[RMDB]
RNA sequence: GGGAACGACUCGAGUAGAGUCGAAAACAUGUCGGACUGGGUCACCCGGAUGGUGUUGAGCUUGAUGGCUACCGGCAUCGCGCCUCGUUCGUUCUACGAACCGGACUCCGAGGGCAAUCGGCAACGCUGUAAAGGGGGCAUUCGUGCCCCCUUUACAAAAAGAAACAACAACAACAAC
Reactivity to 2A3 in 0.01 (KOAc 150mM, MgCl2 10mM, bicine 150mM(pH8.5), 24C), signal-to-noise 3, nucleotides 027 to 126: c060a000u120g020u010c020g000g060a130c040u120g020g050g080u090c040a060c000c020c000g100g010a100u070g000g030u040g020u090u190g010a040g000c050u080u080g090a050u080g120g000c000u020a060c020c000g020g000c000a030u080c050g060c000g030c000c040u000c020g020u000u010c010g000u050u110c040u160a060c020g030a060a050c050c030g000g090a060c010u010c060c050g000a070g000g000g000c060a050a030u040c000g000g000c040a110a000c000g030c180
Reactivity to DMS in 0.01 (KOAc 150mM, MgCl2 10mM, bicine 150mM(pH8.5), 24C), signal-to-noise 2, nucleotides 027 to 126: c090a080u000g000u000c000g000g010a080c060u030g010g020g030u010c020a090c100c000c030g000g020a130u000g000g040u030g020u000u020g000a090g000c100u000u030g000a090u030g000g010c010u010a060c080c050g020g000c060a020u000c050g000c230g000c100c020u040c110g000u000u020c010g000u000u000c120u010a050c040g000a010a060c070c140g000g000a160c100u020c030c020g010a100g000g000g050c020a070a030u000c030g040g010c070a090a050c090g010c110

Structure probing data (2A3 and DMS) for a 177-nucleotide construct. DMS adducts were read by reverse transcription with MarathonRT. The data come from the RNA Mapping Database (RMDB), library OK1LIB. The DMS profile rests on 3,094 reads. Conditions: 150 mM KOAc, 10 mM MgCl2 and 150 mM bicine (pH 8.5), 24 C. 2A3 adducts were read by reverse transcription with SuperScript II with manganese. High DMS reactivity at an A or C suggests that its Watson-Crick edge is free.